[RMDB]
RNA sequence: GGGAACGACUCGAGUAGAGUCGAAAAGAUAUGGAUGUACUCCCCACCGUUAGGAGCAGCUCGGAAACGAGCUGAACUACUCCUUUCGAGGUACAUCCUAAGUCAAAGACAAUGUUCGCAUUGUCAAUCAAAGAGGAAGGUUCGCCUUCCUCUUUGAAAAAGAAACAACAACAACAAC
Reactivity to DMS in 0.01 (KOAc 150mM, MgCl2 10mM, bicine 150mM(pH8.5), 24C), signal-to-noise 4, nucleotides 027 to 126: g000a070u030a170u020g020g010a020u000g010u010a010c000u000c110c030c010c040a300c100c030g010u010u010a010g000g030a020g000c010a000g000c000u000c000g000g000a060a080a250c020g010a010g010c000u000g000a020a040c060u010a300c000u000c020c000u000u000u010c020g010a080g040g010u000a000c000a020u000c000c000u010a000a060g010u010c120a110a130a140g000a020c000a010a000u000g010u000u000c170g030c010a010u000u000g020u000c000a140a160
Reactivity to 2A3 in 0.01 (KOAc 150mM, MgCl2 10mM, bicine 150mM(pH8.5), 24C), signal-to-noise 1, nucleotides 027 to 126: g080a070u270a180u300g000g000a000u020g010u010a000c020u180c050c030c000c010a050c020c040g000u000u060a010g000g000a010g040c010a010g010c010u000c010g030g000a040a090a070c020g000a010g000c000u000g000a010a000c010u130a070c000u000c000c010u000u030u010c010g010a000g030g000u000a000c000a020u000c030c000u000a060a010g130u150c110a150a060a000g000a000c010a000a000u020g020u060u120c280g000c200a050u030u010g000u030c030a000a150